An RNA of 177 nucleotides, treated with 2A3 and read out base by base. For 2A3, 399 sequencing reads were counted. For 2A3 the reverse transcriptase was SuperScript II with manganese. Source: RMDB library OK1LIB, as collected in RNAgym. The reactions ran in a buffer of 150 mM KOAc, 10 mM MgCl2 and 150 mM bicine (pH 8.5), at 24 C.
RNA sequence: GGGAACGACUCGAGUAGAGUCGAAAAUGAGCGCGCCGGAUAUGAACGCCAGCGAUCGUGUGGCAGCGGAACGUCGGCACGUUCUUGCUUUUGCCGUUGCCGGUGGCGCGCUCCUGCUGCUGGCAACCUAGGAGGGCCUGUUCGCAGGCCCUCCUAGAAAAGAAACAACAACAACAAC
Reactivity to 2A3 in 0.01 (KOAc 150mM, MgCl2 10mM, bicine 150mM(pH8.5), 24C), signal-to-noise 1, nucleotides 027 to 126: u170g010a030g000c000g000c000g040c000c150g000g110a050u160a210u300g060a220a080c030g010c000c000a000g020c000g100a080u080c070g070u140g010u180g110g000c050a040g000c040g010g020a040a050c000g150u120c080g180g000c100a040c060g070u040u040c020u010u170g000c000u000u070u100u230g060c150c000g050u040u060g000c090c000g010g060u120g000g000c000g000c000g000c000u000c000c000u100g000c000u040g000c000u000g010g000c000a000a000c050